[RMDB]
About this RNA
Source: RMDB libraries RFM100 and RFMREP, as collected in RNAgym. The record gives the reactivity of an RNA of 177 nucleotides to DMS and 2A3. For DMS the reverse transcriptase was MarathonRT. For 2A3 the reverse transcriptase was SuperScript II with manganese. The reactions ran in a buffer of 150 mM KOAc, 10 mM MgCl2 and 150 mM bicine (pH 8.5), at 24 C.

RNA sequence: GGGAACGACUCGAGUAGAGUCGAAAAUUCACUAACAAAUAAUCCCUUUGUUUUAUUGUCCUUUGAGUAUAAGCACUAAAUUGUUUAAUCCUUUUCAGGAGGAAAUGUUUGUCCUUGCAUUUCCUUCGAGUGUUAAGCUAUUCGUAGCUUAACACUCAAAAGAAACAACAACAACAAC
Reactivity to DMS in 0.01 (KOAc 150mM, MgCl2 10mM, bicine 150mM(pH8.5), 24C), signal-to-noise 3, nucleotides 027 to 126: u010u010c070a080c100u000a060a040c110a050a040a040u000a080a120u010c020c000c010u010u000u020g010u000u000u000u020a050u000u000g000u000c030c030u000u010u000g000a090g020u010a050u010a050a070g010c040a050c070u010a040a080a100u010u000g000u000u000u010a070a130u000c030c000u000u000u000u010c170a120g020g010a000g000g000a000a000a000u000g010u000u000u010g010u000c070c050u000u010g010c010a000u000u000u000c000c010u010u000c020
Reactivity to 2A3 in 0.01 (KOAc 150mM, MgCl2 10mM, bicine 150mM(pH8.5), 24C), signal-to-noise 5, nucleotides 027 to 126: u080u050c060a030c130u130a140a020c030a040a090a060u170a060a090u060c000c000c000u020u040u020g050u020u010u010u030a130u070u050g050u060c020c010u040u090u130g030a030g040u090a060u030a200a010g030c020a020c050u130a090a110a110u080u030g020u030u050u050a050a070u070c030c030u030u070u140u120c080a080g000g000a000g000g000a010a000a010u000g030u030u080u170g060u040c010c020u010u020g000c000a000u010u000u010c000c000u000u010c010